[RMDB]
RNA sequence: GGGAACGACUCGAGUAGAGUCGAAAACUCUGCCUGUCCCCAUUUCUUCAAGGUUAGGUGGGCUCUCCUGGCCACAGUAGUUCAAUUUGUACCCCAGGCUCAUUCAUGAGGUUCUCUGUACCUCAGAUCAGAAGGAGAAGUUCGCUUCUCCUUCUGAAAAAGAAACAACAACAACAAC
Reactivity to DMS in 0.01 (KOAc 150mM, MgCl2 10mM, bicine 150mM(pH8.5), 24C), signal-to-noise 3, nucleotides 027 to 126: c080u010c040u000g000c030c020u000g020u000c030c010c010c060a160u000u000u020c040u000u010c110a120a120g000g010u000u010a030g010g040u010g000g010g010c070u010c040u000c040c020u000g010g040c040c040a060c080a050g010u000a030g010u000u010c070a080a170u000u000u010g000u000a150c060c020c000c040a060g000g010c070u000c080a040u000u010c090a140u000g000a020g000g000u000u010c100u010c120u000g010u000a070c030c010u000c010a010g010a130
Reactivity to 2A3 in 0.01 (KOAc 150mM, MgCl2 10mM, bicine 150mM(pH8.5), 24C), signal-to-noise 2, nucleotides 027 to 126: c000u000c030u020g020c000c000u010g040u030c010c020c000c010a040u090u130u110c060u060u070c070a090a040g060g030u100u140a040g010g090u060g050g050g000c020u000c010u000c050c020u010g020g020c020c020a040c010a020g120u140a010g030u030u040c010a090a180u100u010u220g090u100a150c020c000c000c020a030g060g000c020u030c020a080u210u020c010a030u060g030a000g000g000u060u020c140u000c060u090g070u060a030c000c000u010c010a000g010a060
Notes
The record gives the reactivity of an RNA of 177 nucleotides to DMS and 2A3. DMS adducts were read by reverse transcription with MarathonRT. The DMS profile rests on 3,050 reads. 2A3 adducts were read by reverse transcription with SuperScript II with manganese.